[RMDB]
RNA sequence: GGGAACGACUCGAGUAGAGUCGAAAAAGUGGCUAGUUCGCUAGCCACUAAAGACCGCACGGCAGCGCAAAUAAGCCGAAACGCAAACAGAAGCGACUGAAAGACUCCAAACAUUCGUGUUUGGAAAACUAACGGCAAUAUUCGUAUUGCCGUUAGUAAAAGAAACAACAACAACAAC
Reactivity to DMS in 0.01 (KOAc 150mM, MgCl2 10mM, bicine 150mM(pH8.5), 24C), signal-to-noise 3, nucleotides 027 to 126: a050g010u000g000g000c010u000a010g010u000u000c150g040c020u010a000g000c000c010a000c000u000a010a050a110g010a210c040c030g010c080a110c040g000g000c010a110g020c060g020c120a090a070a120u000a080a140g030c010c010g000a020a120a110c120g000c040a050a130a090c130a060g000a150a100g000c020g000a090c090u010g010a060a070a100g000a140c130u000c000c020a030a010a010c000a010u000u000c120g020u000g030u000u000u000g020g000a000a040a100
Reactivity to 2A3 in 0.01 (KOAc 150mM, MgCl2 10mM, bicine 150mM(pH8.5), 24C), signal-to-noise 1, nucleotides 027 to 126: a000g000u000g000g000c000u000a000g000u060u030c060g000c110u010a000g010c000c000a000c000u000a000a000a000g000a010c000c020g030c070a120c050g040g000c010a060g130c090g030c190a060a240a260u290a300a040g000c000c000g050a050a000a000c060g000c060a240a090a100c020a110g070a120a050g040c020g070a030c070u120g060a080a100a060g020a070c030u000c030c000a020a030a020c000a010u010u150c220g060u060g020u010u020u000g020g020a010a010a010